[RMDB]
RNA sequence: GGGAACGACUCGAGUAGAGUCGAAAACGACGGUAGGUACAACUUCAGGAACAUGUCGGGGCUCUGUUCCGCGUACCUAGACUUAACCACCAGGAAGCUGCACAUCUCUUGCCCGCAAUUCUCCAUUCCUCGUACUGUAGGAAGCUACGAAGGCAUCCUUUCUAUGUAGAUUCGUCUACAUAGAAAGAAAAGAAACAACAACAACAAC
Reactivity to DMS in 0.01 (KOAc 150mM, MgCl2 10mM, bicine 150mM(pH8.5), 24C), signal-to-noise 4, nucleotides 027 to 156: c050g030a090c070g020g020u000a020g020g020u000a030c010a090a100c100u010u000c130a140g010g010a050a030c070a040u000g010u000c060g030g010g030g020c070u000c040u000g010u000u000c010c020g010c100g020u010a020c010c010u000a040g010a070c050u000u000a110a120c040c010a110c030c010a110g010g000a080a120g020c010u000g010c030a060c040a110u010c030u010c030u000u000g020c010c010c020g010c080a050a100u000u000c010u000c010c010a210u000u000c020c010u000c020g000u000a100c120u000g010u000a080g000g010a040a060g000c030u010a060c060g010a110a090g010g030c030a190u010c040
Reactivity to 2A3 in 0.01 (KOAc 150mM, MgCl2 10mM, bicine 150mM(pH8.5), 24C), signal-to-noise 8, nucleotides 027 to 156: c080g110a010c040g000g040u030a000g010g010u020a020c020a090a080c160u190u180c120a080g000g010a030a010c000a020u120g090u190c050g000g000g000g000c010u000c010u020g010u020u000c020c000g010c030g010u000a020c000c000u000a020g020a010c000u050u100a040a040c000c020a010c010c010a030g050g040a050a030g040c040u050g020c030a030c020a150u040c030u010c000u090u100g020c020c020c020g010c020a020a100u090u030c030u010c040c020a080u080u050c000c000u020c020g040u080a090c040u080g030u060a050g040g070a060a010g030c020u030a020c060g070a090a020g040g000c010a050u070c000
The data come from the RNA Mapping Database (RMDB), library OK3TST. This 207-nucleotide RNA was probed chemically with DMS and 2A3. Reactivities are rounded to 0.1 and cut off at 0 and 3. DMS adducts were read by reverse transcription with MarathonRT. Conditions: 150 mM KOAc, 10 mM MgCl2 and 150 mM bicine (pH 8.5), 24 C.